[RMDB]
RNA sequence: GGGAACGACUCGAGUAGAGUCGAAAAGAUAUGGACGUGGCUAGUCGCCGAUGUUACAGCGACACCGUCGGAAACGACGGUGAGAACGCUGUAACAUCGGAACUACGACAAACCACGUCCUAAGUCAGGUAAUAUAACAGUUCGCUGUUAUAUUACCAAAAGAAACAACAACAACAAC
Reactivity to DMS in 0.01 (KOAc 150mM, MgCl2 10mM, bicine 150mM(pH8.5), 24C), signal-to-noise 5, nucleotides 027 to 126: g000a090u010a300u000g000g000a000c020g050u000g000g020c020u000a300g010u000c000g020c010c000g010a010u000g000u000u000a010c000a010g000c000g020a220c000a030c000c000g000u000c000g000g000a140a110a270c010g030a010c000g000g000u000g000a100g010a160a130c020g020c010u000g000u000a000a000c000a000u000c000g010g000a020a030c150u010a300c020g010a000c010a030a130a270c000c000a010c000g010u000c000c000u000a020a080g000u000c070a140
Reactivity to 2A3 in 0.01 (KOAc 150mM, MgCl2 10mM, bicine 150mM(pH8.5), 24C), signal-to-noise 3, nucleotides 027 to 126: g060a020u110a040u230g000g010a000c000g010u010g000g020c040u040a000g000u020c010g000c030c000g010a010u010g000u000u010a000c010a000g030c040g300a140c060a000c010c000g010u000c010g020g030a100a090a030c010g010a000c000g020g000u020g000a020g040a050a020c010g000c000u000g000u000a010a000c000a000u000c000g000g000a010a000c020u170a030c020g000a000c000a010a080a000c000c000a000c000g000u000c000c000u000a000a000g020u000c040a030

The data come from the RNA Mapping Database (RMDB), library TTRINS. The record gives the reactivity of an RNA of 177 nucleotides to DMS and 2A3. The DMS profile rests on 6,965 reads. The RNA was probed in 150 mM KOAc, 10 mM MgCl2 and 150 mM bicine (pH 8.5) at 24 C. DMS adducts were read by reverse transcription with MarathonRT. High DMS reactivity at an A or C suggests that its Watson-Crick edge is free.